RNA sequence: GGGAACGACUCGAGUAGAGUCGAAAAGGGGGUGUAUGUGUGUUUGUAACACAGCUAAGAGAGCUACUUCUUAUUGUCUCUUAUCAUCAUUGCUAAGUCAUCUAACCUUAAAACAGUGAUUAAGUGCCACAGACACUUUAAUUUAUCAUGCCAGUUAUAGGGUAUGGUAUUUCGAUACCAUACCCUAAAAAGAAACAACAACAACAAC
Reactivity to 2A3 in 0.01 (KOAc 150mM, MgCl2 10mM, bicine 150mM(pH8.5), 24C), signal-to-noise 3, nucleotides 027 to 156: g060g010g010g000g010u030g010u000a060u040g060u000g000u000g010u040u060u070g080u040a030a010c010a010c000a050g010c020u040a060a000g030a000g010a020g080c030u070a040c060u100u140c020u100u170a140u080u170g050u010c000u000c000u010u050a060u070c010a000u010c010a030u020u000g040c050u070a040a000g050u010c010a020u000c070u070a020a110c020c000u030u060a000a110a020a060c020a000g000u010g030a010u040u070a060a010g000u000g050c040c030a070c040a040g040a030c010a010c010u060u050u060a050a040u050u030u080a070u050c030a010u080g080c040c000a010g030u100u080a070
Reactivity to DMS in 0.01 (KOAc 150mM, MgCl2 10mM, bicine 150mM(pH8.5), 24C), signal-to-noise 3, nucleotides 027 to 156: g000g020g030g050g040u000g030u000a040u000g020u010g030u010g020u000u000u000g020u000a100a080c040a060c030a130g030c110u000a070a100g020a070g010a110g040c040u000a070c030u000u010c070u010u000a140u000u000g010u000c010u000c010u020u000a100u000c100a100u000c020a040u000u010g050c030u010a070a080g000u010c050a110u000c120u000a070a110c070c040u010u000a040a070a060a060c030a070g000u000g010a060u000u000a050a100g020u010g020c010c010a100c120a080g000a040c000a020c010u000u000u000a050a040u000u000u000a080u020c060a070u000g010c040c040a100g000u000u010a230
Structure probing data (2A3 and DMS) for a 207-nucleotide construct. DMS adducts were read by reverse transcription with MarathonRT. The data come from the RNA Mapping Database (RMDB), library OK3TST. The reactions ran in a buffer of 150 mM KOAc, 10 mM MgCl2 and 150 mM bicine (pH 8.5), at 24 C. Reactivities are given for positions 27 through 156. 2A3 adducts were read by reverse transcription with SuperScript II with manganese.